[RMDB]
RNA sequence: GGGAACGACUCGAGUAGAGUCGAAAAGAUGGCCUGAGGCUGGGAUUCACUGUGUAGCGGACCAGCUCAUGUUGACGGAACGUCCGCACUAAGCUUGCCAUCAAUAUGGGUGCCAUGGAGGAGUCCAAGGCAUUCAGGUUGGCUAAGGAGGGAUGAACGGUAUAGUCAAGUUCGCUUGACUAUACCGAAAAGAAACAACAACAACAAC
Reactivity to DMS in 0.01 (KOAc 150mM, MgCl2 10mM, bicine 150mM(pH8.5), 24C), signal-to-noise 2, nucleotides 027 to 156: g000a150u000g040g000c060c040u010g000a140g030g050c010u010g050g010g010a220u000u000c050a080c020u000g000u000g010u020a060g100c010g020g000a080c020c030a180g020c020u000c020a050u000g060u000u000g000a110c090g000g000a160a100c120g020u000c000c020g100c020a170c010u000a090a050g000c030u000u000g010c020c000a100u000c050a080a100u030a120u010g010g000g010u000g050c010c000a170u000g010g000a060g050g050a230g000u000c030c000a030a110g000g060c030a030u020u000c040a000g000g060u000u010g000g000c050u000a080a130g020g000a170g000g000g020a090u000g020a130a260
Reactivity to 2A3 in 0.01 (KOAc 150mM, MgCl2 10mM, bicine 150mM(pH8.5), 24C), signal-to-noise 2, nucleotides 027 to 156: g080a040u050g040g020c000c020u040g010a040g040g030c010u030g000g020g010a060u140u120c040a040c160u060g000u040g080u200a020g000c010g040g000a030c010c000a050g070c010u000c020a020u170g090u120u120g070a050c030g040g060a080a090c050g020u010c010c000g010c000a010c040u080a020a060g030c000u040u070g010c000c000a030u070c010a040a050u240a080u090g030g000g000u010g000c010c010a020u020g030g000a040g080g000a060g080u030c020c000a030a040g020g000c000a000u000u010c010a000g010g000u070u020g010g000c050u050a010a090g050g000a010g000g060g000a020u050g020a060a020